Overview
Chemical mapping of a 177-nucleotide RNA with 2A3. The 2A3 profile rests on 443 reads.
[RMDB]
RNA sequence: GGGAACGACUCGAGUAGAGUCGAAAACAAUACUUACCAAAGCAUUGAUAUGAGUGCCAAUACUGGCAAUGUGCCUUGUUUGAAAAAGAUACUAAUAUUGCUUGAAAGGCCACCAUAAAUAGCAACGGGCGUGAACUAGGUUCGCCUAGUUCACGCCAAAAGAAACAACAACAACAAC
Reactivity to 2A3 in 0.01 (KOAc 150mM, MgCl2 10mM, bicine 150mM(pH8.5), 24C), signal-to-noise 1, nucleotides 027 to 126: c000a000a190u180a270c000u140u300a160c100c000a050a160a000g000c030a040u150u150g060a000u100a000u090g040a060g010u030g060c000c000a000a300u020a300c040u030g070g010c000a040a040u000g000u000g040c000c000u090u160g170u100u120u100g270a200a140a000a000a000g030a000u000a000c000u000a030a040u060a000u060u080g020c050u000u210g000a060a010a000g060g060c040c000a000c000c000a000u030a000a020a000u250a170g000c000a080a060c050g120
Conditions: 150 mM KOAc, 10 mM MgCl2 and 150 mM bicine (pH 8.5), 24 C.